[RMDB]
RNA sequence: GGGAACGACUCGAGUAGAGUCGAAAACUGCCGCCGGGACGCAGUGAUCCUCGCAGGGUCGCACGGUCGCCUCGGGUCGGCCUCGUGUCGGCUCGACCUGCGAGGGGAGCGAGUGGCGAACCCGACCAAAACUUUCUCGCCUUCGGGCGAGAAAGAAGGCUAUGGAUUAGUUCGCUAAUCCAUAGCCAAAAGAAACAACAACAACAAC
Reactivity to 2A3 in 0.01 (KOAc 150mM, MgCl2 10mM, bicine 150mM(pH8.5), 24C), signal-to-noise 1, nucleotides 027 to 156: c020u030g040c000c030g030c030c050g110g080g100a070c010g010c020a200g150u020g000a020u000c010c000u000c010g000c020a010g000g030g020u120c040g020c050a010c070g020g000u000c030g010c010c010u020c000g000g010g000u020c000g000g020c000c000u120c130g160u200g040u050c040g030g010c040u040c080g020a030c000c000u000g000c010g000a000g000g000g000g010a010g000c010g000a060g090u090g030g000c000g010a010a010c000c000c020g050a040c030c020a110a080a000a000c000u020u010u000c000u000c000g000c000c000u090u040c190g090g000g000c000g010a000g000a000a000a000g000a020a010
Chemical mapping of a 207-nucleotide RNA with 2A3. It was measured as part of the RMDB library M2RFPK. Conditions: 150 mM KOAc, 10 mM MgCl2 and 150 mM bicine (pH 8.5), 24 C. For 2A3 the reverse transcriptase was SuperScript II with manganese.